Source: RMDB library M2RFPK, as collected in RNAgym. An RNA of 207 nucleotides, treated with DMS and 2A3 and read out base by base. DMS adducts were read by reverse transcription with MarathonRT. 2A3 adducts were read by reverse transcription with SuperScript II with manganese. Values cover nucleotides 27 to 156.

RNA sequence: GGGAACGACUCGAGUAGAGUCGAAAAAUACAUACUGACACCGGUUGCUCAACAGGCUGUGUGGGACAAUAGAAUAACAAGGCUGUCAAUUUGAGCUUGACGGCUGCAAACCGAAUGUAGUGAAAUCGUAACCGGACUCACUUCGGUGAGUCCGGAAGAUAUCAUAACUGUUCGCAGUUAUGAUAUCAAAAGAAACAACAACAACAAC
Reactivity to DMS in 0.01 (KOAc 150mM, MgCl2 10mM, bicine 150mM(pH8.5), 24C), signal-to-noise 2, nucleotides 027 to 156: a080u010a100c030a120u000a090c050u010g020a090c040a090c040c010g000g010u000u000g000c060u000c040a090a170c060a120g000g050c030u010g020u000g010u020g020g010g000a040c060a060a140u000a050g030a110a130u010a080a140c060a040a230g000g000c060u000g000u000c020a060a040u000u020u000g000a130g010c300u000u050g020a060c010g040g000c000u000g070c110a040a050a120c080c040g030a040a080u010g000u000a060g000u000g010a030a100a080u000c060g000u020a060a170c000c000g000g000a010c000u000c000a020c030u000u070c280g020g030u000g000a030g020u000c000c000g000g010a010a010
Reactivity to 2A3 in 0.01 (KOAc 150mM, MgCl2 10mM, bicine 150mM(pH8.5), 24C), signal-to-noise 4, nucleotides 027 to 156: a000u110a010c040a020u090a030c020u060g090a050c030a030c050c010g040g010u050u060g020c020u040c120a110a060c050a100g110g010c050u050g040u030g010u050g120g020g030a020c040a040a110u120a090g100a110a060u140a100a010c060a100a040g040g000c020u010g010u000c000a000a010u090u090u170g030a030g030c000u000u000g010a010c000g030g020c020u050g000c020a040a040a080c060c020g060a070a060u080g010u030a030g050u040g120a040a040a080u100c060g030u060a030a060c000c000g010g000a000c000u010c000a000c000u010u080c170g050g000u000g000a000g000u000c000c000g000g000a000a000